[RMDB]
RNA sequence: GGGAACGACUCGAGUAGAGUCGAAAAAUGAAAGUACUUAGGUUAGGAUUCACCGAUAAAUAUAUCGAGAAGCAGGAGCCUAUCGAUGUAGUAUUCGAUAAGUACCAGCCGCUUGGAUAUGUAGCUGCAUCAGUUUUGGGUUCGCCCAAAACUGAUGAAAAGAAACAACAACAACAAC
Reactivity to 2A3 in 0.01 (KOAc 150mM, MgCl2 10mM, bicine 150mM(pH8.5), 24C), signal-to-noise 3, nucleotides 027 to 126: a000u250g020a070a030a000g080u060a020c030u030u070a050g020g030u110u070a040g110g060a220u170u060c050a080c090c000g030a020u080a050a150a000u060a000u020a000u010c000g010a010g020a090a000g000c040a090g020g260a050g080c020c010u040a070u020c030g000a000u000g020u020a090g080u040a060u010u100c000g010a010u010a090a020g010u020a040c000c000a020g010c000c020g000c070u040u120g060g020a050u030a040u190g090u060a030g030c060u050g000
Reactivity to DMS in 0.01 (KOAc 150mM, MgCl2 10mM, bicine 150mM(pH8.5), 24C), signal-to-noise 3, nucleotides 027 to 126: a130u020g000a120a120a140g020u010a010c030u010u010a050g000g000u000u000a080g000g000a070u010u100c060a050c030c030g000a060u000a090a100a110u010a000u000a040u000c000g010a040g010a050a300g010c020a210g010g000a300g000c010c020u010a190u000c000g000a000u010g000u010a030g050u060a150u000u000c010g030a050u010a010a100g040u000a060c030c060a040g010c000c100g000c070u010u000g030g010a090u010a050u000g020u010a020g000c080u000g010

This 177-nucleotide RNA was probed chemically with 2A3 and DMS. Conditions: 150 mM KOAc, 10 mM MgCl2 and 150 mM bicine (pH 8.5), 24 C. For DMS the reverse transcriptase was MarathonRT. The DMS profile rests on 2,870 reads. It was measured as part of the RMDB library OK1LIB. Reactivities are given for positions 27 through 126.